[RMDB]
RNA sequence: GGGAACGACUCGAGUAGAGUCGAAAAAGAGAGAUUUAGAGUGCCAGUUGUGGAUUUCAGUGGAGUGUAUGAGGCUAACCAGAUGUUUUCACUUGGUCUCGGUUGCGCCAAGCUCACUGGCAGCGACUCGGAUCCGGGAGUUCGCUCCCGGAUCCGAAAAAGAAACAACAACAACAAC
Reactivity to 2A3 in 0.01 (KOAc 150mM, MgCl2 10mM, bicine 150mM(pH8.5), 24C), signal-to-noise 1, nucleotides 027 to 126: a010g260a000g000a000g000a040u090u050u210a080g000a060g040u070g030c020c000a000g000u020u000g030u170g000g060a300u000u110u080c000a000g100u010g280g180a030g000u010g000u100a300u100g120a010g000g160c020u020a040a040c000c000a040g000a000u000g260u050u100u020u140c170a180c070u110u230g200g000u000c010u020c000g130g020u080u070g060c030g000c000c000a010a000g080c000u000c000a020c000u000g000g000c000a030g040c000g010a090c070
An RNA of 177 nucleotides, treated with 2A3 and read out base by base. The RNA was probed in 150 mM KOAc, 10 mM MgCl2 and 150 mM bicine (pH 8.5) at 24 C. The 2A3 profile rests on 288 reads.